[RMDB]
RNA sequence: GGGAACGACUCGAGUAGAGUCGAAAAUGCUCGAUACUUGACGCGAGCGGGCGAGUUCUUGACGCUCCCUCUCGUAUUGUCUCUCUCUUUCUUUCGCAAGCUCGAGUUCCCGUUCAAGGGCUUUAAUACGUUCACUCUCUGGCGUGGGAGCCGGUUAGCGACCACCACCUUUCGAGGUGGUGGUCGCAAAAGAAACAACAACAACAAC
Reactivity to 2A3 in 0.01 (KOAc 150mM, MgCl2 10mM, bicine 150mM(pH8.5), 24C), signal-to-noise 1, nucleotides 027 to 156: u130g050c010u060c080g030a050u040a120c050u030u160g030a030c030g010c080g000a000g010c270g000g000g000c170g030a010g030u200u190c110u170u160g140a100c070g020c010u080c000c000c000u040c000u000c000g030u010a100u120u300g080u080c050u000c000u000c000u020c000u050u010u070c030u080u060u010c010g000c030a000a250g000c030u000c000g000a000g000u000u000c000c000c010g030u060u020c150a230a070g030g000g020c030u200u210u280a100a050u100a010c000g040u090u150c080a070c060u130c000u040c030u130g130g000c110g000u080g090g050g000a050g070c060c000g040g000u010u070a030

An RNA of 207 nucleotides, treated with 2A3 and read out base by base. For 2A3, 353 sequencing reads were counted. The RNA was probed in 150 mM KOAc, 10 mM MgCl2 and 150 mM bicine (pH 8.5) at 24 C. 2A3 adducts were read by reverse transcription with SuperScript II with manganese.